Structure probing data (DMS and 2A3) for a 177-nucleotide construct. It was measured as part of the RMDB library OK2TST. Reactivities are given for positions 27 through 126.

[RMDB]
RNA sequence: GGGAACGACUCGAGUAGAGUCGAAAAUUGACAGUAAUGUGUCGCAAUGGCUGUCGCACUGUCUUGUUGCAGCGCCAUCUAGCGACGGAAUGUCCGGAAAGAGAAUGCAACAAAAAAGUCACAUAGAGAUGCAGCAUGGAUUCGUCCAUGCUGCAUCAAAAGAAACAACAACAACAAC
Reactivity to DMS in 0.01 (KOAc 150mM, MgCl2 10mM, bicine 150mM(pH8.5), 24C), signal-to-noise 2, nucleotides 027 to 126: u010u000g030a000c000a000g050u030a110a150u010g030u000g030u000c000g010c020a180a050u000g010g000c000u010g070u020c060g000c040a110c020u000g020u000c110u000u000g010u020u010g010c010a060g030c070g000c040c020a050u010c090u020a080g020c080g000a000c000g010g010a070a060u000g020u000c000c010g020g000a030a080a060g020a070g010a150a110u000g030c010a030a030c040a000a090a080a080a050a010g000u010c060a010c240a080u000a130g000a150
Reactivity to 2A3 in 0.01 (KOAc 150mM, MgCl2 10mM, bicine 150mM(pH8.5), 24C), signal-to-noise 1, nucleotides 027 to 126: u060u060g030a000c010a040g070u160a140a160u210g100u080g030u200c010g000c040a070a130u080g050g000c030u080g000u080c010g000c030a030c010u100g100u060c000u190u040g160u120u040g000c000a000g000c010g010c030c000a010u020c080u100a090g020c040g050a000c020g030g020a050a040u170g010u000c000c000g000g110a150a060a000g080a000g020a080a000u000g060c020a020a010c050a060a050a090a030a040a000g050u070c090a000c010a110u030a000g060a010